The data come from the RNA Mapping Database (RMDB), library OK3TST. An RNA of 207 nucleotides, treated with 2A3 and DMS and read out base by base. The 2A3 profile rests on 1,375 reads. DMS adducts were read by reverse transcription with MarathonRT.
[RMDB]
RNA sequence: GGGAACGACUCGAGUAGAGUCGAAAAUGAAUGCAGUUUAUGUUCCAUCUGAGAAGAUCUCCAUUUCUUCAAGUGUUUAACAACAGUCCUGAUGAGUCGUCAUAUUACAGACAUCAUUUUGCCCGGCAGGACCUGACCCAGUCCCUCAUCAUGAUCAUGGGGAUUAAAUAUUCGUAUUUAAUCCCCAAAAAGAAACAACAACAACAAC
Reactivity to 2A3 in 0.01 (KOAc 150mM, MgCl2 10mM, bicine 150mM(pH8.5), 24C), signal-to-noise 2, nucleotides 027 to 156: u100g040a010a030u100g030c050a040g010u050u070u030a070u100g030u060u030c000c020a000u010c040u050g070a080g040a080a010g000a030u020c030u030c020c020a060u030u010u050c020u050u020c020a060a070g050u010g030u040u110u060a090a020c070a020a020c010a030g040u020c000c000u060g000a050u040g010a030g040u060c040g060u020c050a010u080a030u140u140a040c040a040g070a010c000a030u040c020a030u050u070u090u080g020c000c000c000g020g000c010a000g000g020a020c000c010u030g010a020c010c010c000a000g020u030c000c000c010u010c020a030u030c000a010u000g000a010u250c010a020
Reactivity to DMS in 0.01 (KOAc 150mM, MgCl2 10mM, bicine 150mM(pH8.5), 24C), signal-to-noise 3, nucleotides 027 to 156: u010g020a080a070u000g000c050a180g030u000u010u010a070u020g020u000u000c020c020a110u000c090u000g000a190g020a080a100g020a070u000c050u000c070c070a200u000u000u000c010u000u010c040a050a160g030u000g010u000u020u010a110a080c070a090a140c050a090g020u000c020c020u000g000a090u000g020a070g000u010c070g000u000c050a090u000a090u010u010a090c070a140g000a150c030a090u010c090a150u010u010u010u000g000c000c000c000g050g000c080a060g030g010a060c000c020u000g010a080c020c020c010a160g000u010c020c020c000u000c020a080u010c060a060u000g010a090u000c050a180
Values cover nucleotides 27 to 156. Conditions: 150 mM KOAc, 10 mM MgCl2 and 150 mM bicine (pH 8.5), 24 C.